RNA sequence: GGGAACGACUCGAGUAGAGUCGAAAAGAUAUGGAGUGGUCAACGGGAGUUCCCACUCGGAAACGAGUGUGAGAACGAGGAUCGUUACCACUCCUAAGUCAAAGUCAGAGCGUUCGCGCUCUGACAAGAAAUCUUAACAGUUCGCUGUUAAGAUUUCAAAAGAAACAACAACAACAAC
Reactivity to DMS in 0.01 (KOAc 150mM, MgCl2 10mM, bicine 150mM(pH8.5), 24C), signal-to-noise 5, nucleotides 027 to 126: g000a020u000a240u010g000g000a020g020u000g010g010u010c300a020a010c010g010g000g010a140g020u000u000c010c010c000a000c000u000c000g020g000a040a050a120c010g000a020g010u000g000u010g020a190g020a010a000c010g010a120g000g010a080u010c000g000u000u000a070c000c000a010c010u000c010c000u000a000a040g000u010c020a110a110a170g000u000c000a010g010a010g020c010g030u000u010c230g020c000g030c000u010c000u010g000a000c000a040a070
Reactivity to 2A3 in 0.01 (KOAc 150mM, MgCl2 10mM, bicine 150mM(pH8.5), 24C), signal-to-noise 7, nucleotides 027 to 126: g010a000u020a020u070g000g000a000g020u020g030g040u180c250a030a020c010g000g000g090a300g020u010u000c010c000c000a000c000u000c000g010g000a020a030a010c010g000a010g000u030g060u230g060a300g000a070a010c020g000a140g110g160a260u090c010g000u010u010a000c000c000a000c000u000c000c000u000a000a000g000u010c020a070a010a020g000u000c000a000g000a000g000c030g070u170u170c300g050c020g020c200u000c000u010g000a000c000a000a000
Conditions: 150 mM KOAc, 10 mM MgCl2 and 150 mM bicine (pH 8.5), 24 C. This 177-nucleotide RNA was probed chemically with DMS and 2A3. For 2A3, 20,383 sequencing reads were counted.